[RMDB]
This 207-nucleotide RNA was probed chemically with DMS and 2A3. It was measured as part of the RMDB library OK3TST. For DMS the reverse transcriptase was MarathonRT.

RNA sequence: GGGAACGACUCGAGUAGAGUCGAAAAGAGUAUGAGGUGGAUAGAGAAAUAGAUGUAAAACAAGAAUAUGCAGUUUAUGAACAUGUAAAAAAUGAGCACGUUAUACUUAUAGAGUCAUGUUGGAAGAAUGCACAUAAACAAAUUAAAAAAGAUAAAACUAUGCUGACUCAUUCGUGAGUCAGCAUAGAAAAGAAACAACAACAACAAC
Reactivity to DMS in 0.01 (KOAc 150mM, MgCl2 10mM, bicine 150mM(pH8.5), 24C), signal-to-noise 1, nucleotides 027 to 156: g000a100g010u060a040u000g000a050g000g020u000g010g050a220u000a070g010a130g000a110a120a060u010a070g000a140u000g000u000a000a000a040a030c040a030a060g000a020a020u000a100u020g040c000a010g000u000u000u000a040u020g020a080a140c010a020u030g060u000a000a020a050a110a060a110u000g000a060g010c030a070c090g010u020u000a100u010a100c090u040u000a060u000a050g010a090g000u010c000a090u000g030u000u000g000g010a020a240g020a050a110u000g020c060a010c030a060u000a070a080a190c040a030a000a010u000u000a000a030a060a130a030a050g000a190u000a080a000a030a080
Reactivity to 2A3 in 0.01 (KOAc 150mM, MgCl2 10mM, bicine 150mM(pH8.5), 24C), signal-to-noise 1, nucleotides 027 to 156: g040a050g020u000a010u080g000a010g030g000u050g060g070a130u090a080g030a020g010a010a070a040u120a030g130a040u230g030u050a000a000a060a060c000a000a000g040a030a010u040a060u150g020c000a000g000u000u000u140a020u020g030a030a010c050a020u050g000u100a230a100a000a000a000a000u070g030a000g000c010a000c000g000u020u030a050u030a110c010u090u030a000u050a090g010a000g080u040c070a100u070g020u050u010g040g050a070a000g020a120a000u090g040c100a030c000a070u120a040a030a000c030a030a070a050u200u180a100a080a090a040a000a000g120a030u210a050a100a000a000